Structure probing data (2A3 and DMS) for a 207-nucleotide construct. The RNA was probed in 150 mM KOAc, 10 mM MgCl2 and 150 mM bicine (pH 8.5) at 24 C.
RNA sequence: GGGAACGACUCGAGUAGAGUCGAAAACAGGACGUUAGCAUAGGUCCACUUUACUAUGCAGAUUGCAUCGUCGGAGACGACGUAGAGACCGCAACAGCAGGGUCGAUGAACUGCUGAAUUACACCUCUUGUCAUAGCGAGGGAUCAAGCUAUGUACAGCCUCAUAAUUAGUUCGCUAAUUAUGAGGCAAAAGAAACAACAACAACAAC
Reactivity to 2A3 in 0.01 (KOAc 150mM, MgCl2 10mM, bicine 150mM(pH8.5), 24C), signal-to-noise 6, nucleotides 027 to 156: c030a010g000g070a000c040g060u130u140a030g000c010a020u020a020g020g020u010c020c000a060c020u040u050u030a060c010u010a010u010g020c000a020g070a300u160u220g050c060a110u070c030g010u000c000g010g030a070g010a060c010g000a000c000g000u040a060g020a000g000a060c000c010g000c050a050a040c000a070g000c000a000g020g020g010u040c070g060a140u200g050a040a030c000u000g000c000u000g020a030a030u070u060a070c090a040c020c010u050c020u080u120g020u030c010a000u010a010g000c000g010a020g020g040g000a010u100c070a050a010g000c000u000a000u020g070u070a020c010a020
Reactivity to DMS in 0.01 (KOAc 150mM, MgCl2 10mM, bicine 150mM(pH8.5), 24C), signal-to-noise 4, nucleotides 027 to 156: c070a160g010g030a060c070g020u000u000a150g020c020a040u000a060g020g010u000c060c060a080c140u000u000u000a110c000u000a030u000g000c020a220g010a150u000u000g010c050a130u010c020g020u000c010g030g010a300g000a250c010g010a030c020g010u000a090g010a120g010a110c020c040g020c060a100a160c030a040g010c020a030g010g020g030u000c060g020a150u000g010a040a100c000u000g000c030u000g000a060a070u010u000a090c070a110c050c020u000c010u000u000g030u000c010a050u000a030g010c010g000a090g000g000g010a080u000c040a100a210g010c000u000a010u000g000u000a030c080a130